[RMDB]
RNA sequence: GGGAACGACUCGAGUAGAGUCGAAAAGCUCUAGGAGACUAGAGCGAUACGUUAGAGAGCGCGUGGCAUGACUAACGGAUAGCCAGGUACGAGGUUGCCAGAGGACAUAGCUAUAGCUAUGUCCAAAGACCUAUCAUACCUUCGGGUAUGAUAGGUCAAAAGAAACAACAACAACAAC
Reactivity to 2A3 in 0.01 (KOAc 150mM, MgCl2 10mM, bicine 150mM(pH8.5), 24C), signal-to-noise 2, nucleotides 027 to 126: g000c000u030c000u000a020g000g010a020g030a030c000u000a000g000a000g010c000g000a010u010a020c020g010u010u050a080g010a000g000a010g100c040g000c030g040u080g040g000c020a020u080g060a090c000u030a070a000c020g030g020a110u040a020g050c010c050a050g030g010u060a070c080g050a090g010g070u050u020g040c030c010a010g040a070g040g000a000c010a000u000a000g000c000u170a040u070a300g000c000u000a000u040g000u010c000c000a000a000a000
Reactivity to DMS in 0.01 (KOAc 150mM, MgCl2 10mM, bicine 150mM(pH8.5), 24C), signal-to-noise 2, nucleotides 027 to 126: g000c000u000c000u000a000g010g010a160g000a110c010u000a000g000a010g020c000g020a020u010a040c050g000u010u010a030g000a150g010a080g020c070g000c090g060u000g000g030c060a030u030g000a230c030u020a050a010c070g010g020a050u010a080g040c030c000a080g000g030u010a040c080g000a090g020g000u020u010g010c000c060a070g000a300g010g030a010c000a010u000a030g000c000u020a160u020a090g000c000u010a000u000g000u000c000c000a000a050a080